[RMDB]
RNA sequence: GGGAACGACUCGAGUAGAGUCGAAAAUCCUAAGUCACUACCCUUAUGAGGGUUACGGGAGGAUAUCGGAAACGAUAUCCAUCGAUCGUAACCUACCCACCAUAAGGAGUAGUGAUAUGGAAAAAGGUCGAGGAUAUGUUCGCAUAUCCUCGACCAAGUCUGCCUAUUGGUUCGCCAAUAGGCAGACAAAAGAAACAACAACAACAAC
Reactivity to 2A3 in 0.01 (KOAc 150mM, MgCl2 10mM, bicine 150mM(pH8.5), 24C), signal-to-noise 1, nucleotides 027 to 156: u000c000c000u030a140a000g030u000c000a000c010u000a000c000c000c030u010u010a040u000g020a020g030g020g000u000u010a000c020g010g000g000a030g010g000a000u000a000u000c010g020g030a140a020a080c030g010a000u010a010u030c010c010a010u050c010g040a050u010c010g000u000a000a000c000c000u020a080c070c030c000a080c020c000a000u010a000a010g020g060a010g010u000a000g000u000g000a000u000a000u000g050g070a020a050a020a110a070g000g000u000c000g000a010g000g000a000u000a000u040g020u100u150c300g010c140a000u000a000u000c000c010u000c000g000a000c000c000a010a000